[RMDB]
Notes: The record gives the reactivity of an RNA of 207 nucleotides to 2A3. The data come from the RNA Mapping Database (RMDB), library OK3TST. The reactions ran in a buffer of 150 mM KOAc, 10 mM MgCl2 and 150 mM bicine (pH 8.5), at 24 C.
RNA sequence: GGGAACGACUCGAGUAGAGUCGAAAACAGCUGCAGGCUUUCACCAUACACAACAGCAUCGCUAACGAAUGCUAUUACAAUAUUCAUUUAGCGUUUACCAAGUGCCUACUCUAUACAAAUCUUGAGAAUACAACGUGAAGGUGAACUGCUGACUAAACGACUCGGAUCUUUUCGAAGAUCCGAGUCGAAAAGAAACAACAACAACAAC
Reactivity to 2A3 in 0.01 (KOAc 150mM, MgCl2 10mM, bicine 150mM(pH8.5), 24C), signal-to-noise 1, nucleotides 027 to 156: c010a000g010c020u080g000c020a000g010g070c060u000u050u050c040a060c020c060a090u180a300c050a000c000a050a140c000a060g080c040a000u000c000g000c010u040a080a000c160g030a030a010u000g080c060u140a160u210u150a040c050a030a140u000a020u100u030c030a030u050u050u050a020g010c000g000u000u000u070a080c020c000a060a000g010u000g150c040c000u050a180c040u060c000u110a070u000a240c070a170a120a130u270c110u040u160g000a010g050a070a080u230a140c020a090a060c080g050u090g040a060a050g000g000u000g040a020a000c030u000g000c000u020g020a050c090u200a130a130a130